[RMDB]
This 177-nucleotide RNA was probed chemically with DMS and 2A3. 2A3 adducts were read by reverse transcription with SuperScript II with manganese. The DMS profile rests on 1,345 reads. Values cover nucleotides 27 to 126.
RNA sequence: GGGAACGACUCGAGUAGAGUCGAAAAGUACGAUUUUUCGAAAUCGUACGAAGGUCAGGUGGCAGCACCACGACACUGGUCGCGGCGACCGAGCCCAACAGAAUAUGUGUAAUUUCGAUUACACAAAGGCGAAUACAAAAUUCGUUUUGUAUUCGCCAAAAGAAACAACAACAACAAC
Reactivity to DMS in 0.01 (KOAc 150mM, MgCl2 10mM, bicine 150mM(pH8.5), 24C), signal-to-noise 2, nucleotides 027 to 126: g010u000a010c000g000a000u000u010u000u000u010c110g020a030a000a000u000c000g020u000a000c010g010a060a040g000g010u000c030a070g010g020u000g000g040c030a050g040c020a060c000c010a030c190g010a100c300a120c300u030g010g000u000c160g020c020g000g010c000g010a010c000c020g000a060g000c000c000c020a080a090c260a060g020a040a090u000a070u000g010u000g010u000a000a000u000u000u000c180g010a040u000u000a000c000a000c010a040a080a100
Reactivity to 2A3 in 0.01 (KOAc 150mM, MgCl2 10mM, bicine 150mM(pH8.5), 24C), signal-to-noise 2, nucleotides 027 to 126: g000u000a000c000g010a010u000u010u010u000u080c070g040a000a010a000u000c000g000u010a000c000g000a030a000g050g160u100c130a090g030g060u030g090g030c020a000g000c010a000c000c020a000c050g130a030c040a030c100u040g040g020u010c080g000c010g030g000c010g030a000c010c010g000a020g000c010c000c000a010a000c020a040g240a150a060u210a100u160g000u010g000u000a000a000u000u090u100c210g030a010u010u000a000c000a000c030a010a050a010